[RMDB]
RNA sequence: GGGAACGACUCGAGUAGAGUCGAAAAAGUCAUAACUGCUAUUCUCCAGGAAUAGUGAUUGUGAUUAGCGAUGCGGGUGUGUUGGCGCACAUCCGCACCGCGCUGCGCCAGGUUGUUCGCAACCUGGGCUAAAAUGCGGGUUCGCCCGCAUUUUAGCAAAAGAAACAACAACAACAAC
Reactivity to 2A3 in 0.01 (KOAc 150mM, MgCl2 10mM, bicine 150mM(pH8.5), 24C), signal-to-noise 2, nucleotides 027 to 126: a000g020u020c000a010u010a030a010c020u020g000c000u010a000u010u020c020u100c160c140a230g070g060a000a010u010a010g020u000g020a010u000u000g000u010g000a000u060u080a020g000c020g010a000u000g020c010g000g010g010u020g010u010g020u020u210g210g040c110g000c050a000c000a000u020c010c000g020c000a000c000c000g040c000g000c060u090g040c040g070c010c000a000g010g000u010u010g040u050u060c140g040c120a000a010c000c020u000g010g000
Reactivity to DMS in 0.01 (KOAc 150mM, MgCl2 10mM, bicine 150mM(pH8.5), 24C), signal-to-noise 2, nucleotides 027 to 126: a090g010u000c000a000u000a000a020c040u000g000c000u000a000u000u000c000u010c200c300a130g010g000a020a000u000a000g020u000g010a020u000u010g020u000g000a000u000u000a070g020c000g000a010u000g030c010g020g000g010u000g020u000g010u000u010g010g000c300g000c000a010c000a020u000c000c000g010c000a000c000c000g020c000g000c210u000g000c160g030c010c000a010g000g030u010u000g000u000u010c210g020c000a010a030c000c000u000g000g000